Background: The record gives the reactivity of an RNA of 177 nucleotides to 2A3 and DMS. The 2A3 profile rests on 11,379 reads. The data come from the RNA Mapping Database (RMDB), library OK2TRN.

[RMDB]
RNA sequence: GGGAACGACUCGAGUAGAGUCGAAAACACCCUCAGUACCGAACUCGGCGGAGGUGAUGGCGCAGUGUCCGGUGACACUGGGCUGCCGGUCGGGGUGGCUCUGCUGGCUGCGCUGCUUGCCGGGGUGCAAUACGCAGUACUUCGGUACUGCGUAUUGAAAAGAAACAACAACAACAAC
Reactivity to 2A3 in 0.01 (KOAc 150mM, MgCl2 10mM, bicine 150mM(pH8.5), 24C), signal-to-noise 6, nucleotides 027 to 126: c060a070c010c010c010u040c060a070g060u080a070c020c030g030a140a110c030u020c050g020g000c050g080g100a060g050g050u160g090a200u220g040g000c030g000c030a010g010u050g140u110c040c030g090g070u160g050a040c070a030c150u040g000g060g020c010u000g010c020c010g020g100u130c060g000g170g000g020u030g020g000c010u020c030u100g060c000u020g040g000c010u010g000c020g000c030u070g010c020u040u080g010c020c000g010g000g000g000u020g010
Reactivity to DMS in 0.01 (KOAc 150mM, MgCl2 10mM, bicine 150mM(pH8.5), 24C), signal-to-noise 6, nucleotides 027 to 126: c140a150c020c000c010u000c110a100g020u010a080c050c030g010a100a110c090u010c020g010g020c040g000g000a100g010g010u000g010a090u010g010g010c000g030c000a010g010u010g010u010c030c100g020g010u010g000a100c100a110c120u000g000g000g020c010u000g010c030c000g020g000u010c160g010g000g000g020u010g000g000c010u000c010u010g010c060u010g000g010c020u010g000c030g020c020u000g010c060u000u000g020c010c010g000g000g000g010u010g010
DMS adducts were read by reverse transcription with MarathonRT. 2A3 adducts were read by reverse transcription with SuperScript II with manganese.